[RMDB]
RNA sequence: GGGAACGACUCGAGUAGAGUCGAAAAGAUAUGGAGCCACCACUUUCUCCUGUGGCGUUUGACGUCGGAAACGACCGAGCCACAAGAGAAAUGUGGCUCCUAAGUCAAACACGGGUUCGCCCGUGAACCAUGUCCACAAGUUCGCUUGUGGACAUGGAAAAGAAACAACAACAACAAC
Reactivity to DMS in 0.01 (KOAc 150mM, MgCl2 10mM, bicine 150mM(pH8.5), 24C), signal-to-noise 3, nucleotides 027 to 126: g000a030u000a300u010g000g010a020g010c010c010a010c000c040a050c080u010u000u000c010u000c000c060u000g020u000g010g010c010g000u000u020u010g000a150c300g000u000c000g000g000a090a110a210c000g010a030c010c030g000a060g000c000c010a010c000a000a040g000a040g010a010a090a010u010g000u000g000g010c010u000c000c000u000a010a070g010u000c020a130a090a270c000a000c010g020g010g010u000u000c210g010c000c000c000g000u000g000a070a190
Reactivity to 2A3 in 0.01 (KOAc 150mM, MgCl2 10mM, bicine 150mM(pH8.5), 24C), signal-to-noise 2, nucleotides 027 to 126: g020a020u080a070u170g000g010a000g010c000c000a010c010c010a100c050u020u010u020c000u010c000c000u000g000u010g000g000c030g020u070u200u250g100a070c040g000u000c000g030g040a050a120a110c010g000a000c010c000g010a010g000c000c010a010c000a000a000g010a010g000a010a010a010u200g000u000g000g000c010u010c000c000u000a000a000g000u000c000a020a030a050c000a000c000g000g030g030u050u100c260g180c030c000c000g000u000g000a010a000
An RNA of 177 nucleotides, treated with DMS and 2A3 and read out base by base. Conditions: 150 mM KOAc, 10 mM MgCl2 and 150 mM bicine (pH 8.5), 24 C. For DMS, 2,444 sequencing reads were counted. Source: RMDB library TTRDEL, as collected in RNAgym.